[RMDB]
RNA sequence: GGGAACGACUCGAGUAGAGUCGAAAAGAUAUGGAAAGGCACUCUCUUGGACCAUGAGUCCAUCGGAAACGAUGGAGCUCAUGCUAGAGAAACCUUUCCUAAGUCAAAAGACGCCUUCGGGCGUCAACAUUAUGGAUUCCUUCGGGAAUCCAUAAUGAAAAGAAACAACAACAACAAC
Reactivity to 2A3 in 0.01 (KOAc 150mM, MgCl2 10mM, bicine 150mM(pH8.5), 24C), signal-to-noise 2, nucleotides 027 to 126: g010a020u090a060u210g000g010a000a000a040g010g000c130a080c190u030c010u050c020u120u160g100g090a170c140c010a010u000g000a000g020u000c010c010a000u010c010g000g060a070a010a050c040g000a000u000g020g040a070g020c010u000c000a000u000g010c030u030a000g000a010g000a090a060a020c000c000u000u010u000c000c000u000a060a020g000u000c010a000a000a060a290g010a010c010g040c010c020u100u170c300g160g010g000c000g000u000c000a010a000
Reactivity to DMS in 0.01 (KOAc 150mM, MgCl2 10mM, bicine 150mM(pH8.5), 24C), signal-to-noise 3, nucleotides 027 to 126: g000a060u000a300u000g000g010a000a010a000g010g020c040a160c250u010c010u000c000u000u000g060g020a200c300c020a000u010g000a010g000u000c000c000a000u010c000g010g000a130a080a210c000g010a020u010g010g000a060g020c000u000c000a000u000g000c030u000a010g000a010g020a050a190a120c000c000u000u000u000c010c000u000a010a090g000u000c060a120a090a120a170g000a040c000g000c010c000u000u020c220g020g010g020c000g000u000c000a010a120